[RMDB]
RNA sequence: GGGAACGACUCGAGUAGAGUCGAAAAGAUAUGGAAUGAACUACAGCAGCGUUACGCGUUGAAAUCGGAAACGAUGGAGCGUGACCUGCUGCAUUCCUAAGUCAAAAGAGUGGGUUCGCCCACUCAACUCCUCUUCGAAGUUCGCUUCGAAGAGGAGAAAAGAAACAACAACAACAAC
Reactivity to 2A3 in 0.01 (KOAc 150mM, MgCl2 10mM, bicine 150mM(pH8.5), 24C), signal-to-noise 2, nucleotides 027 to 126: g040a040u080a050u170g000g010a000a030u010g000a080a040c110u220a060c300a010g020c000a000g000c020g220u000u010a000c010g020c050g190u300u020g010a020a030a010u010c000g020g010a060a030a050c020g010a000u020g020g020a040g000c010g010u010g010a000c000c010u010g070c010u010g010c000a010u000u000c000c000u030a180a030g090u040c060a040a020a050a180g000a020g000u020g030g000g000u060u190c280g170c020c000c000a000c000u000c000a000a020
Reactivity to DMS in 0.01 (KOAc 150mM, MgCl2 10mM, bicine 150mM(pH8.5), 24C), signal-to-noise 2, nucleotides 027 to 126: g030a050u000a300u000g000g000a000a010u010g010a090a040c120u000a300c000a010g010c000a000g010c170g010u000u000a000c010g020c000g000u000u000g000a030a110a020u000c000g010g010a080a100a160c020g000a030u000g000g000a050g020c000g000u000g000a010c010c000u000g010c000u000g000c010a020u000u000c000c000u000a070a140g010u000c030a020a060a090a080g010a000g000u000g000g010g010u000u000c300g000c000c000c010a010c000u000c000a030a120
About this RNA: The record gives the reactivity of an RNA of 177 nucleotides to 2A3 and DMS. High 2A3 reactivity points to a flexible backbone, as in loops and unpaired stretches. It was measured as part of the RMDB library TTRDEL. The RNA was probed in 150 mM KOAc, 10 mM MgCl2 and 150 mM bicine (pH 8.5) at 24 C. The 2A3 profile rests on 3,966 reads. 2A3 adducts were read by reverse transcription with SuperScript II with manganese. The DMS profile rests on 1,622 reads.